[RMDB]
RNA sequence: GGGAACGACUCGAGUAGAGUCGAAAAAUGAAGAGUUGGUUCUCUGCUAAGGAGAUGCAAGACGGUGACGUACGCGUUUCUAAGAUCAAAGAUAGUCUACCAUGGAAACGGUAUGAUUAUACGAAAAGGAAUCCUACUAGUUCGCUAGUAGGAUUCCAAAAGAAACAACAACAACAAC
Reactivity to DMS in 0.01 (KOAc 150mM, MgCl2 10mM, bicine 150mM(pH8.5), 24C), signal-to-noise 2, nucleotides 027 to 126: a080u000g000a150a150g000a040g020u000u000g000g040u000u020c000u000c010u000g000c130u030a070a210g010g000a040g000a050u000g000c000a130a190g000a010c020g040g000u000g000a150c030g030u000a050c190g000c040g000u000u000u000c020u030a090a170g000a120u020c220a020a080a050g010a040u000a040g070u000c000u000a030c010c060a170u000g020g010a030a080a080c100g010g030u000a000u020g000a000u010u000a010u000a100c090g000a080a060a060a140
Reactivity to 2A3 in 0.01 (KOAc 150mM, MgCl2 10mM, bicine 150mM(pH8.5), 24C), signal-to-noise 1, nucleotides 027 to 126: a020u160g020a020a040g080a000g060u070u000g130g020u100u000c020u000c030u060g020c040u050a000a190g050g000a030g000a020u040g020c080a130a020g120a040c000g070g040u050g090a010c010g030u050a000c060g030c010g050u000u000u000c010u010a030a030g030a130u080c090a080a070a050g090a040u010a010g020u030c000u030a050c020c000a060u160g110g180a120a040a050c080g000g010u020a010u040g020a000u030u020a000u050a130c040g000a080a030a000a080